[RMDB]
RNA sequence: GGGAACGACUCGAGUAGAGUCGAAAAGGCAGGAAUAGAAUGGGCCGAAUCUAGUGUGACACUGCAGGCCAAAAGCUAUUUUUGUUUGGCGCAAGGCCUGGUGGCUGAGGCGGCUGUGUUCACCAAGCAAUAUUAUAUUUUUCGAAAUAUAAUAUUGAAAAGAAACAACAACAACAAC
Reactivity to DMS in 0.01 (KOAc 150mM, MgCl2 10mM, bicine 150mM(pH8.5), 24C), signal-to-noise 7, nucleotides 027 to 126: g010g020c020a060g010g020a120a100u030a080g020a130a130u030g000g010g010c010c010g010a090a090u020c040u020a070g010u030g010u010g000a030c010a010c000u010g000c010a030g020g020c000c010a010a060a090a020g000c010u000a010u000u010u040u030u030g010u010u030u010g000g010c000g020c200a130a120g010g020c020c010u010g000g010u010g000g000c020u000g000a300g000g010c020g000g000c010u000g010u000g010u040u010c000a020c010c060a160a120g010
Reactivity to 2A3 in 0.01 (KOAc 150mM, MgCl2 10mM, bicine 150mM(pH8.5), 24C), signal-to-noise 4, nucleotides 027 to 126: g030g000c010a000g050g090a080a060u100a110g120a130a050u130g040g050g020c000c000g010a010a010u040c020u040a060g040u050g010u010g230a010c010a000c000u050g000c020a020g130g000c000c000a000a130a020a000g000c000u000a020u050u060u020u070u080g230u170u150u110g020g000c020g000c100a100a040g150g000c010c000u010g010g000u030g010g010c010u020g000a000g010g030c000g000g000c020u020g010u010g020u120u100c020a020c020c030a010a000g030

This 177-nucleotide RNA was probed chemically with DMS and 2A3. For 2A3 the reverse transcriptase was SuperScript II with manganese. For 2A3, 3,642 sequencing reads were counted. It was measured as part of the RMDB library OK1LIB.